[RMDB]
RNA sequence: GGGAACGACUCGAGUAGAGUCGAAAAAGAUGACCAAGGGCAUCAUUUAGACUCCUAUUUUGUCGUUAAGAGGCAUACUAUGGAGAAUUAUGAACUAGAGAAGCACUGUUACGACUUGUUACGUGACUACCUAACAUCUUCGGAUGUUAGAAAAGAAACAACAACAACAAC
Reactivity to DMS in 0.01 (KOAc 150mM, MgCl2 10mM, bicine 150mM(pH8.5), 24C), signal-to-noise 9, nucleotides 027 to 129: a060g010a040u030g020a090c000c020a120a130g020g010g010c000a020u000c040a060u000u000u000a080g000a140c000u000c020c010u000a070u020u010u010u020g030u010c000g000u000u040a080a090g030a130g000g000c040a040u020a070c100u010a060u020g020g000a050g000a100a060u000u000a070u020g030a100a080c090u000a080g040a070g000a100a030g030c030a040c090u030g000u050u000a050c040g020a060c100u000u000g030u050u020a000c150g010u020g020a130c000u020a080c300
Reactivity to 2A3 in 0.01 (KOAc 150mM, MgCl2 10mM, bicine 150mM(pH8.5), 24C), signal-to-noise 9, nucleotides 027 to 129: a000g010a040u050g040a030c020c050a120a140g090g060g000c010a010u000c000a000u080u050u050a070g030a050c000u040c010c010u020a080u040u090u030u030g020u010c000g010u020u020a180a050g080a120g090g020c000a020u040a070c050u120a080u190g020g000a030g030a040a020u170u090a110u160g060a050a040c070u050a040g020a010g020a150a020g040c040a010c140u070g030u070u040a020c040g050a060c080u070u150g050u090u050a010c010g010u010g020a020c020u020a040c000